Chemical mapping of a 177-nucleotide RNA with DMS and 2A3. The data come from the RNA Mapping Database (RMDB), library TTRDEL.
[RMDB]
RNA sequence: GGGAACGACUCGAGUAGAGUCGAAAAGAUAUGGAUGUUCGAGGUCAAUGACAUCGAUCUCGGAAACGAGGGAGUCAUUGACUACCCACCGAACAUCCUAAGUCAAACGCCGGCUUCGGCCGGCGAACAGUUGUAUUCUCUUCGGAGAAUACAACUGAAAAGAAACAACAACAACAAC
Reactivity to DMS in 0.01 (KOAc 150mM, MgCl2 10mM, bicine 150mM(pH8.5), 24C), signal-to-noise 2, nucleotides 027 to 126: g010a090u020a300u000g010g000a000u000g010u000u000c010g010a080g010g010u000c000a000a030u000g010a000c000a260u000c140g000a050u000c000u000c000g000g000a070a070a180c020g000a010g000g000g010a060g020u000c000a020u000u000g010a030c020u000a020c040c030c130a300c130c000g000a000a000c000a010u030c000c000u010a000a100g020u000c030a080a080a180c060g030c010c000g020g000c000u010u010c180g020g030c040c020g010g020c000g000a040a080
Reactivity to 2A3 in 0.01 (KOAc 150mM, MgCl2 10mM, bicine 150mM(pH8.5), 24C), signal-to-noise 1, nucleotides 027 to 126: g010a020u100a050u250g010g000a020u010g000u020u000c010g010a020g000g000u010c000a010a000u020g000a010c030a270u300c130g080a170u010c020u000c010g010g010a050a100a030c000g000a010g000g000g000a040g030u010c010a020u010u010g020a000c000u010a040c010c020c000a030c010c000g000a010a000c010a000u020c000c000u020a120a020g040u000c080a280a030a200c020g000c010c010g010g050c000u070u060c170g160g000c000c000g000g010c010g000a040a000
For DMS the reverse transcriptase was MarathonRT. For 2A3 the reverse transcriptase was SuperScript II with manganese.